Chemical mapping of a 170-nucleotide RNA with DMS and 2A3. 2A3 adducts were read by reverse transcription with SuperScript II with manganese. For DMS, 61,675 sequencing reads were counted. Conditions: 150 mM KOAc, 10 mM MgCl2 and 150 mM bicine (pH 8.5), 24 C.
[RMDB]
RNA sequence: GGGAACGACUCGAGUAGAGUCGAAAAACGUUGAUAUGGAUUUACUCCGAGGAGACGAACUACGACGAACAGGGGAAACUCUACCCGUGGCGUCUCCGUUUGACGAGUAAGUCCUAAGUCAACAUGCAUCGAUUUGUGUUCGCACAAAUCAAAAGAAACAACAACAACAAC
Reactivity to DMS in 0.01 (KOAc 150mM, MgCl2 10mM, bicine 150mM(pH8.5), 24C), signal-to-noise 8, nucleotides 027 to 129: a060c150g000u000u000g020a030u020a110u000g000g010a030u030u010u000a000c020u020c000c000g000a010g060g000a040g040a020c000g000a070a030c020u110a160c090g000a000c030g000a060a120c140a120g020g020g020g000a030a020a000c000u030c000u030a120c230c140c020g030u000g000g040c000g000u000c020u020c000c010g000u050u030u000g020a170c300g020a000g000u000a000a010g030u020c000c000u010a020a040g010u020c010a000a000c000a030u100g030c090a110u080c130
Reactivity to 2A3 in 0.01 (KOAc 150mM, MgCl2 10mM, bicine 150mM(pH8.5), 24C), signal-to-noise 9, nucleotides 027 to 129: a000c080g000u000u000g000a000u000a000u040g000g000a000u000u000u000a000c000u000c000c000g010a030g000g000a000g030a000c010g020a070a040c080u190a040c130g160a010c030g030a130a030c040a100g000g000g000g000a000a000a000c000u000c000u020a040c020c030c010g000u010g010g000c000g000u000c000u000c000c000g010u140u090u080g010a000c000g000a000g000u000a000a000g000u000c000c000u000a000a000g000u000c000a000a000c000a010u110g060c010a140u130c110